[RMDB]
RNA sequence: GGGAACGACUCGAGUAGAGUCGAAAAGAUAUGGAUGCCAGCCCUCGAUAAGCUCCUAUCGGAAACGAUAGAGAGCUUUUGACGAGGUCUGGCAUCCUAAGUCAAAAGCCCUACUUCGGUAGGGCAAGAUUAACAAGAAGUUCGCUUCUUGUUAAUCAAAAGAAACAACAACAACAAC
Reactivity to 2A3 in 0.01 (KOAc 150mM, MgCl2 10mM, bicine 150mM(pH8.5), 24C), signal-to-noise 3, nucleotides 027 to 126: g010a020u050a000u090g010g000a010u000g010c030c010a030g010c010c040c000u010c010g170a110u040a300a010g010c000u020c000c010u000a010u010c010g010g000a080a060a010c030g010a000u020a010g300a020g010a000g100c020u010u010u000u010g010a030c020g020a000g020g000u010c010u000g000g000c010a000u000c000c010u000a000a010g000u000c000a000a010a090a100g000c000c000c000u010a010c010u030u100c290g120g000u000a000g000g000g000c000a000a000
Reactivity to DMS in 0.01 (KOAc 150mM, MgCl2 10mM, bicine 150mM(pH8.5), 24C), signal-to-noise 8, nucleotides 027 to 126: g000a030u000a300u010g000g000a020u000g010c000c000a010g000c100c000c000u000c000g020a170u000a030a020g010c000u000c000c000u000a010u000c000g010g000a120a070a140c000g010a010u000a000g000a170g020a010g010c000u000u000u000u010g010a190c150g000a020g000g010u000c000u000g000g010c000a000u000c000c000u000a010a060g000u010c030a110a090a150a200g000c000c000c000u000a000c000u000u010c180g040g010u000a000g000g000g010c000a000a010
Description: Structure probing data (2A3 and DMS) for a 177-nucleotide construct. Values cover nucleotides 27 to 126. DMS adducts were read by reverse transcription with MarathonRT. For DMS, 17,765 sequencing reads were counted.